[RMDB]
RNA sequence: GGGAACGACUCGAGUAGAGUCGAAAAAUACAGGGAUGAGGCAGACCUGACUCUCUUAAGGAGGCUGAGAGCCCAAACUGCUGUCCCAAACAUGCACUUCCUUGCUUAAGGUAUGGUACAAGCAAUGCCUGCCCAUUGGAGAGAAAAAACUUAAGUAGCUCCUUCAUUAAUUCGUUAAUGAAGGAGCAAAAGAAACAACAACAACAAC
Reactivity to 2A3 in 0.01 (KOAc 150mM, MgCl2 10mM, bicine 150mM(pH8.5), 24C), signal-to-noise 2, nucleotides 027 to 156: a000u150a020c030a040g070g020g020a030u270g290a120g030g000c020a030g010a070c010c020u030g020a050c010u020c000u020c000u060u070a160a100g030g000a030g070g000c050u040g010a020g010a000g060c020c060c000a030a070a010c010u020g000c030u020g030u060c030c000c010a030a070a010c100a050u120g000c030a010c060u040u000c000c000u040u040g040c010u100u090a050a030g040g020u040a040u200g000g000u050a020c020a100a020g060c010a030a050u060g010c000c000u010g010c010c030c010a050u060u080g050g020a020g000a000g020a040a030a020a200a000a020c070u170u180a060a030g030u200a050
Reactivity to DMS in 0.01 (KOAc 150mM, MgCl2 10mM, bicine 150mM(pH8.5), 24C), signal-to-noise 1, nucleotides 027 to 156: a130u000a100c040a050g010g000g010a160u010g010a150g040g040c020a050g000a130c070c110u000g000a040c010u020c010u030c000u000u000a130a140g020g020a110g010g040c300u000g000a110g000a100g030c000c030c090a050a050a160c010u010g010c040u000g010u010c000c000c020a020a070a090c070a130u010g020c020a060c120u000u000c020c010u000u010g020c020u010u000a000a000g010g000u000a090u000g100g000u000a010c100a000a080g000c130a120a070u000g010c010c000u000g000c040c000c000a190u000u040g010g020a160g000a140g030a000a060a070a080a050a140c020u000u010a030a050g000u000a180